[RMDB]
RNA sequence: GGGAACGACUCGAGUAGAGUCGAAAAGAUUGAGACGGCCGCAAUGCUGAGGUCAGCCAUUUGACUGACUGCAGGCAUCCUCGCAUCGGGAUAUCUACAUUGACGUCAGGUAUCAGGCGUCGCUAUAUUGCUAUUGGAUAGCUUAUCCAAUGGCUCAGACGUACGGUACUUUCGAGUACCGUACGUCAAAAGAAACAACAACAACAAC
Reactivity to 2A3 in 0.01 (KOAc 150mM, MgCl2 10mM, bicine 150mM(pH8.5), 24C), signal-to-noise 3, nucleotides 027 to 156: g050a030u160u210g040a050g010a040c060g040g010c010c010g010c070a050a020u060g000c070u090g060a000g040g010u020c050a030g000c060c020a110u200u180u300g090a140c030u070g000a010c000u070g040c100a030g000g000c000a010u010c000c020u070c030g060c030a030u160c060g020g050g000a010u040a020u060c020u040a060c040a090u150u190g080a040c070g020u040c060a070g070g030u090a040u050c010a020g040g000c000g000u060c000g000c000u080a080u080a060u300u280g000c000u000a000u030u020g010g000a000u000a080g130c120u100u150a100u030c000c000a000a000u000g010g000c020u020c080a030